Structure probing data (2A3 and DMS) for a 207-nucleotide construct. For 2A3, 1,964 sequencing reads were counted. For DMS the reverse transcriptase was MarathonRT.
RNA sequence: GGGAACGACUCGAGUAGAGUCGAAAAUCAAGAGCUAGGGUCAUUGAGAGAACACUUCUCACUCAUGAGUUUCAGAGCGUAGCAGAGUACACACACCUGAAGCAAGAAAUGUAAUUUUCUCUAAGUGUACUAAGAAUUACUUUAAUUCUCUGUAUGAUCCACGAAAAUUAUUCGUAAUUUUCGUGGAAAAAGAAACAACAACAACAAC
Reactivity to 2A3 in 0.01 (KOAc 150mM, MgCl2 10mM, bicine 150mM(pH8.5), 24C), signal-to-noise 3, nucleotides 027 to 156: u060c020a050a040g000a010g050c030u080a050g030g020g000u030c030a060u060u150g010a020g000a000g020a120a040c050a050c120u170u100c030u020c030a020c020u070c020a050u100g020a020g060u060u060u070c040a030g000a020g050c020g010u030a010g000c040a000g030a000g130u060a000c020a000c010a000c000a010c020c040u050g060a050a000g020c030a040a020g040a050a040a000u120g020u120a040a190u070u040u030u030c040u000c010u030a080a090g040u010g000u080a020c000u020a070a000g000a020a040u060u040a050c020u120u150u180a060a040u080u000c010u000c030u010g040u010a040u020g050a020
Reactivity to DMS in 0.01 (KOAc 150mM, MgCl2 10mM, bicine 150mM(pH8.5), 24C), signal-to-noise 3, nucleotides 027 to 156: u000c030a080a150g000a080g030c040u000a060g010g020g020u020c050a080u010u000g010a100g010a070g020a120a080c060a070c080u010u000c010u000c090a060c050u000c030a140u020g010a120g070u000u000u020c040a040g010a130g040c000g010u000a100g040c060a090g010a180g020u010a070c050a070c030a110c050a120c100c030u000g010a030a060g020c040a060a080g000a040a030a060u000g000u030a060a090u000u000u000u010c010u000c030u010a080a140g030u000g010u000a020c000u010a020a040g010a070a030u000u000a090c170u010u010u020a020a050u000u000c000u000c040u000g010u010a040u000g030a210